Description:
The data come from the RNA Mapping Database (RMDB), library OK3TST. This 207-nucleotide RNA was probed chemically with DMS and 2A3. DMS adducts were read by reverse transcription with MarathonRT. For 2A3 the reverse transcriptase was SuperScript II with manganese. The reactions ran in a buffer of 150 mM KOAc, 10 mM MgCl2 and 150 mM bicine (pH 8.5), at 24 C. For DMS, 4,625 sequencing reads were counted.

RNA sequence: GGGAACGACUCGAGUAGAGUCGAAAAAAAUCGAGGCGAGAAGCGAUUCAAACAGUGAUAUCGGCUGUGGGGGUGACAGAACGCCGGUAAUCAACUCCACUGCAAUUGUUCCAAAGAGGUGUUGAAACUGUAGAUACCGAGGAUUUCAGUCGUGCUCUCACAGAUUCAGAUUCGUCUGAAUCUGUGAAAAAGAAACAACAACAACAAC
Reactivity to DMS in 0.01 (KOAc 150mM, MgCl2 10mM, bicine 150mM(pH8.5), 24C), signal-to-noise 2, nucleotides 027 to 156: a040a050a060u010c050g030a100g030g040c030g010a110g020a090a100g030c000g010a100u010u000c070a100a050a090c040a110g000u020g010a120u000a070u000c050g020g000c010u000g030u010g000g020g010g010g040u000g010a100c050a090g000a070a100c050g010c000c000g010g040u010a050a160u000c060a050a060c000u000c000c010a060c000u010g030c010a050a070u000u010g000u010u000c050c010a100a040a100g000a160g040g020u010g010u000u010g000a090a080a090c050u000g000u020a160g020a130u010a080c020c020g010a110g010g010a120u000u010u010c040a060g020u000c020g000u000g030c110u000c040
Reactivity to 2A3 in 0.01 (KOAc 150mM, MgCl2 10mM, bicine 150mM(pH8.5), 24C), signal-to-noise 3, nucleotides 027 to 156: a000a070a020u110c020g010a010g030g010c040g010a050g020a100a000g030c000g040a040u150u040c080a070a130a100c050a050g030u020g070a050u040a020u140c030g020g000c010u070g000u050g030g010g000g000g040u030g050a050c030a020g090a110a020c030g000c000c000g000g010u060a060a100u040c010a010a040c010u030c040c060a050c060u010g010c020a000a090u070u060g040u100u050c030c010a030a040a000g060a030g000g020u040g000u000u050g040a130a030a010c040u080g050u120a000g010a050u040a070c020c060g030a050g020g020a050u080u140u080c020a040g030u020c000g050u040g030c020u020c000

Reactivities are rounded to 0.1 and cut off at 0 and 3.